The record gives the reactivity of an RNA of 177 nucleotides to 2A3 and DMS.
DMS (dimethyl sulfate) methylates the pairing face of unpaired adenines and cytosines.

RNA sequence: GGGAACGACUCGAGUAGAGUCGAAAAUGAAUCUUGCGUCGUUCUUAGUUAAAAUCACUUAUGGUUCGACAAGUUCACCGAUCGUGAUUUCAGGUUGAGGGACUAAAAAACGCCGUCAAUUCUGACCCAUUGCCCUAACGUUCGCGUUAGGGCAAUGAAAAGAAACAACAACAACAAC
Reactivity to 2A3 in 0.01 (KOAc 150mM, MgCl2 10mM, bicine 150mM(pH8.5), 24C), signal-to-noise 4, nucleotides 027 to 126: u150g020a010a050u070c020u010u010g010c030g020u000c000g010u000u020c010u000u040a050g030u060u160a120a100a030a020u030c020a030c020u080u070a030u220g050g000u170u120c020g020a010c060a220a080g020u070u050c030a030c020c000g030a090u130c060g000u010g000a000u000u030u060c030a020g000g060u030u010g020a030g030g030g020a010c040u130a030a040a060a040a030a050c040g020c000c010g140u010c010a010a000u200u080c010u000g030a010c000c000
Reactivity to DMS in 0.01 (KOAc 150mM, MgCl2 10mM, bicine 150mM(pH8.5), 24C), signal-to-noise 3, nucleotides 027 to 126: u010g000a150a100u000c030u000u000g000c090g000u000c000g000u000u000c060u000u000a070g030u000u010a090a040a030a010u000c010a010c010u000u010a140u040g000g000u000u010c160g000a020c040a140a250g020u020u000c050a040c020c000g030a100u020c230g020u000g050a020u000u000u020c070a050g030g030u010u000g010a060g000g010g000a050c060u010a000a010a090a050a080a070c300g010c040c000g000u010c060a020a050u010u000c000u000g000a150c200c120